An RNA of 177 nucleotides, treated with DMS and 2A3 and read out base by base. For 2A3, 671 sequencing reads were counted. Reactivities are given for positions 27 through 126.
RNA sequence: GGGAACGACUCGAGUAGAGUCGAAAAUUGUCGGUCGUUUUAAUCGUGUCUUACAACACGAUGAUGUUACCCCAUAAUGACCUGAGAGGUAUGAGGCGAUACCCGUAUUGAUUGUUGAGCGAAGCCGGAUCUGUGAAUACUUCGGUAUUCACAGAUCAAAAGAAACAACAACAACAAC
Reactivity to DMS in 0.01 (KOAc 150mM, MgCl2 10mM, bicine 150mM(pH8.5), 24C), signal-to-noise 3, nucleotides 027 to 126: u010u040g010u010c080g000g000u010c000g010u000u000u000u030a130a010u000c000g000u000g000u000c030u000u010a120c300a160a060c010a000c000g010a010u000g000a080u010g010u020u020a100c040c000c010c020a070u010a050a070u000g030a040c020c010u000g000a110g010a070g000g010u010a030u010g020a070g020g010c060g010a140u010a090c000c010c050g020u010a090u020u010g000a130u010u000g000u010u020g000a120g010c110g020a050a110g000c030c070g000
Reactivity to 2A3 in 0.01 (KOAc 150mM, MgCl2 10mM, bicine 150mM(pH8.5), 24C), signal-to-noise 2, nucleotides 027 to 126: u260u050g070u100c020g000g030u050c000g000u040u000u110u120a030a050u010c000g010u070g020u000c080u120u150a090c050a130a010c000a030c000g000a000u010g030a010u000g000u040u000a050c010c000c000c000a000u110a170a010u080g000a000c000c000u070g120a300g000a050g170g000u060a010u040g090a070g000g060c000g020a010u020a070c000c030c000g080u100a130u080u140g070a280u000u000g050u000u060g010a020g070c070g100a090a000g050c000c000g030